[RMDB]
RNA sequence: GGGAACGACUCGAGUAGAGUCGAAAACUCUGAACUUCGGUUCAGAGAAAAAGCGUACUACUCAUGAAGGCUCCUACCCACCAACUUUCCCAAAUAGGAAAGUUGAGGGAGAACUACCUUAUGAGUAUCGCAAAAAAGGACAAGUUCGCUUGUCCAACUAAUAUCGAAUGUUCGCAUUCGAUAUUAGAAAAGAAACAACAACAACAAC
Reactivity to DMS in 0.01 (KOAc 150mM, MgCl2 10mM, bicine 150mM(pH8.5), 24C), signal-to-noise 3, nucleotides 027 to 156: c010u010c000u000g000a020a030c010u000u010c300g090g000u000u000c000a010g000a040g010a010a040a090a070a200g020c000g010u000a140c140u000a040c010u000c000a030u000g000a050a040g000g000c030u020c070c040u000a110c020c000c020a300c060c000a020a010c000u000u000u000c000c000c010a040a170a250u000a030g010g000a010a010a010g020u000u000g010a090g000g010g000a090g000a060a080c030u000a160c000c010u000u000a050u000g010a000g000u000a020u000c010g030c000a000a040a080a080a080a090g000g010a020c010a020a030g010u000u010c300g030c010u010u000g020u000c000c020a010a090
Reactivity to 2A3 in 0.01 (KOAc 150mM, MgCl2 10mM, bicine 150mM(pH8.5), 24C), signal-to-noise 7, nucleotides 027 to 156: c000u000c000u010g000a000a000c010u060u100c300g100g000u010u000c000a000g010a000g050a110a010a000a010a000g030c030g020u090a070c040u000a010c000u030c010a010u120g270a030a010g020g000c010u030c000c020u150a300c030c000c020a110c080c010a020a000c000u000u000u000c020c010c010a180a300a230u260a110g000g000a000a000a000g000u000u000g010a030g000g040g010a010g000a020a020c140u210a060c030c010u010u020a000u010g010a020g000u010a020u160c020g000c030a020a020a020a030a060a080g000g000a000c000a010a000g010u080u150c210g120c180u010u000g010u000c000c000a000a010
Description: The record gives the reactivity of an RNA of 207 nucleotides to DMS and 2A3. The RNA was probed in 150 mM KOAc, 10 mM MgCl2 and 150 mM bicine (pH 8.5) at 24 C. Reactivities are rounded to 0.1 and cut off at 0 and 3. Source: RMDB library RNAMAK, as collected in RNAgym. For 2A3, 7,071 sequencing reads were counted.